RNA sequence: GGGAACGACUCGAGUAGAGUCGAAAAUCUGGCUGCUUAAUUAGCGCCAGCCAUCUACCACAGGUCUCGCACAUGGGCAGUGGAUUUGAUGGUCACCUUACAUCGUGCUAGCGAGGGAACCUUGUCUGGGGGUGAACCGCGAAACAGUUCCAGGCUCCUUGCAGUAUUUCUUCGGAAAUACUGCAAGAAAAGAAACAACAACAACAAC
Reactivity to 2A3 in 0.01 (KOAc 150mM, MgCl2 10mM, bicine 150mM(pH8.5), 24C), signal-to-noise 4, nucleotides 027 to 156: u030c000u010g010g030c050u090g020c020u300u180a150a090u200u200a200g000c000g000c000c000a000g000c000c000a020u000c020u040a020c000c000a000c010a050g130g020u020c010u010c040g000c000a010c000a020u020g000g000g000c010a020g010u010g010g050a070u260u050u230g000a010u000g000g030u070c050a100c020c000u020u130a020c000a010u040c130g010u010g000c010u020a010g010c000g010a300g030g000g010a010a000c000c000u030u050g000u030c000u010g000g010g000g010g000u000g010a030a010c000c000g000c010g020a010a000a030c100a050g050u180u160c010c000a000g000g000c000u010c000
Reactivity to DMS in 0.01 (KOAc 150mM, MgCl2 10mM, bicine 150mM(pH8.5), 24C), signal-to-noise 2, nucleotides 027 to 156: u000c030u000g020g000c000u030g030c000u000u000a070a140u000u010a120g040c010g030c000c030a030g000c010c000a020u000c010u000a160c000c010a080c010a130g030g040u010c020u010c060g000c170a200c210a120u000g000g010g020c040a300g020u000g000g000a100u000u010u000g000a040u000g010g040u000c020a050c030c010u000u020a090c090a130u000c130g050u000g000c030u000a130g020c050g000a130g030g000g000a080a040c020c000u010u020g030u000c130u000g010g020g010g000g000u000g000a140a110c040c000g000c020g000a100a060a140c090a170g000u000u010c010c010a210g000g000c000u010c300